[RMDB]
RNA sequence: GGGAACGACUCGAGUAGAGUCGAAAAGAUAUGGAAAACGACAUGUCCUUUCACAAGGGAGGAAUACAUGUCGGAAACGACAUGUUCCGAGGAUCUUGUGAGAAGGACAUGUCGUUUUCCUAAGUCACCAUAACGGUUUGUUCGCAAACCGUUAUGGAAAAGAAACAACAACAACAAC
Reactivity to DMS in 0.01 (KOAc 150mM, MgCl2 10mM, bicine 150mM(pH8.5), 24C), signal-to-noise 1, nucleotides 027 to 126: g010a050u000a300u000g000g010a000a000a000a020c000g000a010c000a000u010g020u000c000c000u000u010u000c000a020c060a020a010g000g010g030a020g010g000a040a070u010a060c030a000u000g000u000c000g020g000a070a090a300c010g030a000c000a010u000g010u000u000c010c000g000a040g000g020a020u000c010u000u000g010u000g000a050g030a020a010g010g020a010c000a000u010g000u000c000g000u000u000u000u010c000c000u000a010a060g000u000c060a300
Chemical mapping of a 177-nucleotide RNA with DMS. For DMS, 1,877 sequencing reads were counted. DMS adducts were read by reverse transcription with MarathonRT.